[RMDB]
Chemical mapping of a 177-nucleotide RNA with DMS and 2A3. Conditions: 150 mM KOAc, 10 mM MgCl2 and 150 mM bicine (pH 8.5), 24 C. The 2A3 profile rests on 6,389 reads. For DMS, 13,091 sequencing reads were counted. The data come from the RNA Mapping Database (RMDB), library OK1LIB.
RNA sequence: GGGAACGACUCGAGUAGAGUCGAAAAGAGGAAAGUCCAGCCUCAAGAUCAGCGGAAGUCCCGCGAGGGACAAGCGUAGUACGCUUGGCAACUGCAAAGAAAACUUAACCGUAACUGCUCGCGCCGGAAAUAAAUUAAAAUUCGUUUUAAUUUAUUUAAAAGAAACAACAACAACAAC
Reactivity to DMS in 0.01 (KOAc 150mM, MgCl2 10mM, bicine 150mM(pH8.5), 24C), signal-to-noise 6, nucleotides 027 to 126: g000a060g010g000a080a060a060g020u010c010c020a140g020c020c010u000c040a080a100g000a090u010c080a090g000c040g010g000a110a110g000u000c010c010c010g000c230g020a170g000g000g000a050c010a050a050g010c050g000u010a090g000u030a300c030g010c010u000u000g010g000c070a110a090c040u020g000c060a040a070a120g000a060a070a080a050c070u010u020a070a080c060c030g000u010a060a080c040u000g000c010u010c030g010c050g000c020c030g000g010
Reactivity to 2A3 in 0.01 (KOAc 150mM, MgCl2 10mM, bicine 150mM(pH8.5), 24C), signal-to-noise 6, nucleotides 027 to 126: g070a010g010g060a120a080a010g060u000c020c010a010g020c020c000u010c040a040a030g030a130u070c040a020g010c020g060g020a110a030g060u050c010c010c010g030c050g020a100g020g000g000a010c020a020a010g010c020g010u040a050g070u100a070c010g010c000u010u020g030g010c020a090a080c050u090g010c040a090a100a060g080a050a140a060a030c030u110u070a060a020c030c010g030u030a040a040c030u040g010c010u010c020g000c010g020c010c020g020g010